The record gives the reactivity of an RNA of 207 nucleotides to DMS and 2A3.
The data come from the RNA Mapping Database (RMDB), library OK3TST.
The 2A3 profile rests on 4,763 reads.
RNA sequence: GGGAACGACUCGAGUAGAGUCGAAAACACACUCCUGCAGCUUGGCUAGGGUAGGGAUUCCUGACCAACAGUCCCAUAAGAUCUUAUCCAGUCAGGAGGUACUGGACCAAUCUGAAGUGCAGCCAAGACCGGGAGCCACAGACCUGGAACCUGGGUAAUUUACGCCUAAUUUCGAUUAGGCGUAAAUAAAAGAAACAACAACAACAAC
Reactivity to DMS in 0.01 (KOAc 150mM, MgCl2 10mM, bicine 150mM(pH8.5), 24C), signal-to-noise 3, nucleotides 027 to 156: c050a170c050a090c000u000c000c020u000g020c060a080g020c020u000u010g020g030c000u000a160g030g030g010u000a110g020g040g020a140u000u000c020c010u000g000a080c040c050a040a130c070a110g010u000c010c010c010a160u010a110a080g000a050u000c060u010u000a110u010c030c000a040g000u010c050a070g040g020a100g020g020u000a030c010u000g000g010a060c050c140a060a080u000c010u010g010a110a170g010u000g010c040a040g020c010c000a060a040g010a110c120c020g010g000g010a050g010c000c030a060c030a120g010a100c030c030u000g000g010a070a110c050c020u000g040g020g010u010a080
Reactivity to 2A3 in 0.01 (KOAc 150mM, MgCl2 10mM, bicine 150mM(pH8.5), 24C), signal-to-noise 5, nucleotides 027 to 156: c070a010c010a020c010u020c010c000u040g050c070a100g040c010u040u080g020g000c020u030a050g020g040g050u060a060g080g020g010a020u140u130c010c010u050g070a090c020c050a040a110c020a080g050u040c000c000c000a050u100a090a060g030a020u030c020u080u100a020u040c020c000a010g020u040c020a030g010g080a020g000g070u030a010c000u010g020g080a020c010c040a030a040u030c030u070g070a150a040g070u070g140c050a010g010c000c000a010a010g010a020c010c020g000g000g020a010g010c010c000a060c020a030g090a050c000c030u060g020g070a020a050c030c020u030g010g000g020u030a060